[RMDB]
RNA sequence: GGGAACGACUCGAGUAGAGUCGAAAAAGCGCGCAAUGUGUACAUGGGUAUGCCCCCAUAUCUGUGUACUACAGCCGAGAGGACUUGUGGGGUGAUGAGUGCAGUGCUAGUGUAUUUGGUGCGCGAAGUGUAUAUAUAUAUUCGUAUAUAUAUACACAAAAGAAACAACAACAACAAC
Reactivity to DMS in 0.01 (KOAc 150mM, MgCl2 10mM, bicine 150mM(pH8.5), 24C), signal-to-noise 1, nucleotides 027 to 126: a020g000c020g010c030g040c030a080a060u010g030u020g000u010a010c000a010u000g000g000g000u000a030u010g000c160c000c060c300c060a300u000a030u000c000u000g000u000g000u000a000c010u010a010c000a060g010c010c030g000a080g010a070g010g000a050c040u000u020g030u020g010g000g000g020u010g000a020u020g000a040g020u010g020c050a050g000u010g020c030u010a040g010u020g010u010a070u020u020u000g010g020u000g000c000g010c030g010a040a100
Reactivity to 2A3 in 0.01 (KOAc 150mM, MgCl2 10mM, bicine 150mM(pH8.5), 24C), signal-to-noise 2, nucleotides 027 to 126: a000g020c020g000c000g000c020a040a120u100g030u020g010u050a000c000a030u040g060g000g000u030a020u230g190c000c000c000c060c000a000u000a010u000c010u000g000u000g000u010a010c020u080a010c000a010g010c000c020g040a040g010a010g030g030a040c020u050u060g020u050g030g030g000g020u040g030a010u040g020a010g030u040g010c020a010g030u010g050c000u050a030g020u010g030u060a170u050u070u060g050g000u030g000c030g000c010g030a070a040